[RMDB]
RNA sequence: GGGAACGACUCGAGUAGAGUCGAAAACAUUACUUCGGAAAGAACUAGAACUCGAGACCCCGGAUCUGGAAGAAAAUGGACAGAAGAAGAAGGGUGAAAGGCACAACGAAAGUUGACCAUCUGUGAGUAUUACGGGAGCAUUCGUGCUCCCGUAAUAAAAAGAAACAACAACAACAAC
Reactivity to 2A3 in 0.01 (KOAc 150mM, MgCl2 10mM, bicine 150mM(pH8.5), 24C), signal-to-noise 2, nucleotides 027 to 126: c020a010u080u120a050c000u030u040c020g050g050a210a040a000g030a000a080c010u050a050g090a070a040c000u110c090g010a000g070a090c000c000c000c010g030g050a150u010c000u040g090g030a020a020g180a050a130a030a020u030g030g010a000c000a000g080a030a000g000a000a000g040a060a050g090g000g000u020g000a050a050a050g060g020c040a000c000a300a150c020g010a190a050a000g000u020u000g040a110c020c070a080u030c030u150g130u100g070a060g090
Reactivity to DMS in 0.01 (KOAc 150mM, MgCl2 10mM, bicine 150mM(pH8.5), 24C), signal-to-noise 2, nucleotides 027 to 126: c140a090u050u000a060c050u030u030c000g010g000a050a090a050g000a070a070c020u010a030g000a130a070c030u000c000g000a050g020a180c050c000c010c080g070g030a120u010c020u050g000g000a070a070g010a020a060a060a050u010g000g000a080c030a030g000a040a090g000a040a040g020a030a040g000g000g010u000g030a020a070a050g000g010c070a090c030a040a040c050g000a070a120a070g000u000u020g000a240c070c010a170u020c040u030g000u070g030a140g010